[RMDB]
RNA sequence: GGGAACGACUCGAGUAGAGUCGAAAACAGAUGUCGGCGAGGACGGGAAGACGUUGCAGCAAGAGCAUGUCUACCCGAACCUGUUCAUGGGUGUGACUGCCAACCUCAUGGGCACUGGCUGUCGCGAGCCGACUAUACGAUUCGUCGUAUAGUCGGCAAAAGAAACAACAACAACAAC
Reactivity to DMS in 0.01 (KOAc 150mM, MgCl2 10mM, bicine 150mM(pH8.5), 24C), signal-to-noise 2, nucleotides 027 to 126: c080a160g000a080u030g040u030c030g000g000c070g020a030g020g030a300c000g010g000g000a240a040g000a000c030g020u000u000g010c020a100g010c270a100a170g030a080g000c000a010u000g000u000c000u020a120c070c000c000g030a030a060c030c000u000g010u000u000c080a050u000g000g000g000u040g000u040g010a080c020u000g020c040c070a060a040c020c000u000c090a030u020g010g000g020c050a070c080u000g000g020c060u000g030u000c030g000c040g000a200
Reactivity to 2A3 in 0.01 (KOAc 150mM, MgCl2 10mM, bicine 150mM(pH8.5), 24C), signal-to-noise 4, nucleotides 027 to 126: c030a010g100a080u100g050u130c040g000g020c040g040a050g020g070a020c010g000g010g010a030a000g000a010c060g050u060u120g010c040a110g050c070a190a070g100a030g240c010a010u030g000u000c000u020a120c020c000c000g010a050a060c010c010u040g050u040u040c050a090u060g050g050g000u220g040u030g070a030c050u100g020c020c010a070a250c040c010u100c050a130u230g030g000g000c040a040c040u040g070g000c000u030g010u030c000g000c030g040a030